[RMDB]
RNA sequence: GGGAACGACUCGAGUAGAGUCGAAAAGAGUAUGAGGUGGAUAGAGAAAUAGAUGUAAAACAAGAGAAUGCAGUUUAUGAACAUGUAAAAAAUGAGCACGUUAUACUUAUAGAGUCAUGUUGGAAGAAUGCACUCAAACAAAUUAAAAAAGAUAAAACGCUGAUUUACUAUUCGUAGUAAAUCAGCGAAAAGAAACAACAACAACAAC
Reactivity to 2A3 in 0.01 (KOAc 150mM, MgCl2 10mM, bicine 150mM(pH8.5), 24C), signal-to-noise 3, nucleotides 027 to 156: g060a020g000u060a010u050g000a000g050g010u030g040g040a060u090a060g030a000g060a040a120a020u130a030g080a020u090g030u070a010a010a010a010c010a040a010g060a000g000a070a000u040g000c000a020g010u000u060u100a060u030g050a080a010c030a040u100g040u220a050a020a000a010a020a100u100g000a010g010c020a000c000g020u050u080a070u050a150c030u110u030a040u000a120g020a010g000u000c000a000u060g070u080u060g040g020a020a040g020a060a000u030g010c020a040c030u080c000a020a040a070c040a040a070a040u120u230a100a070a040a040a000a000g030a040u070a080a130a020a000
Reactivity to DMS in 0.01 (KOAc 150mM, MgCl2 10mM, bicine 150mM(pH8.5), 24C), signal-to-noise 2, nucleotides 027 to 156: g020a090g050u000a020u000g010a050g010g060u000g000g020a240u010a090g000a070g010a120a060a120u000a060g020a090u040g040u000a020a030a060a060c010a020a040g000a160g000a040a110u000g020c010a060g000u020u000u000a070u020g020a090a100c080a020u010g050u000a010a020a100a110a070a090u020g020a070g020c020a020c110g010u000u000a170u000a030c070u010u000a060u000a010g020a120g050u000c010a090u000g010u000u000g000g010a160a070g000a020a120u020g010c050a090c080u000c060a020a060a140c060a040a030a110u000u030a000a060a030a110a070a140g000a230u010a010a080a110a190
The record gives the reactivity of an RNA of 207 nucleotides to 2A3 and DMS. The reactions ran in a buffer of 150 mM KOAc, 10 mM MgCl2 and 150 mM bicine (pH 8.5), at 24 C. The 2A3 profile rests on 2,368 reads.